Chemical mapping of a 177-nucleotide RNA with DMS and 2A3.
The data come from the RNA Mapping Database (RMDB), library OK2TST.

RNA sequence: GGGAACGACUCGAGUAGAGUCGAAAACAAGGAAUAUCUAAGAAGAGCACUUGUGCAGGCAAUAUAUAUGACACAGACGGUCCAUUUCCUUUCUUCUAUGAUGCAGAAGAAGCUCUGAUGUCCACUGACUCUGAGGUAACUUCGGUUACCUCAGAGUAAAAGAAACAACAACAACAAC
Reactivity to DMS in 0.01 (KOAc 150mM, MgCl2 10mM, bicine 150mM(pH8.5), 24C), signal-to-noise 1, nucleotides 027 to 126: c090a100a100g000g010a120a090u000a070u010c070u010a160a050g000a140a100g010a040g040c080a130c030u020u000g010u000g000c070a110g010g000c070a070a030u010a070u000a070u020a110u000g000a070c020a000c120a070g010a100c090g000g010u000c020c020a060u000u000u000c000c030u010u000u000c020u000u000c040u010a040u000g000a110u000g010c080a010g000a020a040g010a030a020g000c110u000c020u000g000a160u010g000u010c020c120a110c130u010g010
Reactivity to 2A3 in 0.01 (KOAc 150mM, MgCl2 10mM, bicine 150mM(pH8.5), 24C), signal-to-noise 1, nucleotides 027 to 126: c020a000a060g060g020a110a010u050a070u220c050u170a120a100g040a130a010g010a100g000c010a010c070u050u040g030u010g120c030a030g030g000c010a100a030u050a000u010a010u020a010u220g090a080c060a020c000a060g100a090c030g030g010u000c020c020a020u060u080u010c030c030u050u050u050c020u030u010c010u010a070u180g120a030u120g000c080a000g010a070a010g030a040a020g000c050u000c000u010g090a110u030g050u040c020c020a080c160u060g030

The DMS profile rests on 824 reads. Conditions: 150 mM KOAc, 10 mM MgCl2 and 150 mM bicine (pH 8.5), 24 C. For 2A3 the reverse transcriptase was SuperScript II with manganese. Reactivities are given for positions 27 through 126.